[RMDB]
RNA sequence: GGGAACGACUCGAGUAGAGUCGAAAAUGUAGUCCCAGCUACUCGGGAGGCUGAGACAGGAGGAUCGCUUGAGUCCAGGAGUUCUGGGCUGUAGUGCGCUAUGCCGAUCGGGUGUCCGCACUAAGUUCGGCAUCAAUAUGGUGACCUCCCGGGAGCGGAGGUAUCACUUCUUCGGAAGUGAUACCUCAAAAGAAACAACAACAACAAC
Reactivity to 2A3 in 0.01 (KOAc 150mM, MgCl2 10mM, bicine 150mM(pH8.5), 24C), signal-to-noise 2, nucleotides 027 to 156: u260g050u030a020g030u030c000c000c020a010g000c000u220a300c000u000c070g000g010g000a000g010g010c020u030g030a080g020a120c080a040g080g050a050g010g050a020u090c030g000c020u010u090g130a020g010u000c000c000a020g030g040a300g070u150u090c000u000g010g000g000c000u010g080u100a020g050u030g040c120g000c120u040a000u040g010c000c000g030a080u040c050g050g030g040u040g000u020c070c090g070c020a000c070u120a120a090g010u040u000c000g020g010c000a000u000c000a040a140u100a130u300g080g050u070g060a210c000c020u030c000c010c030g000g010g000a010g000c000g020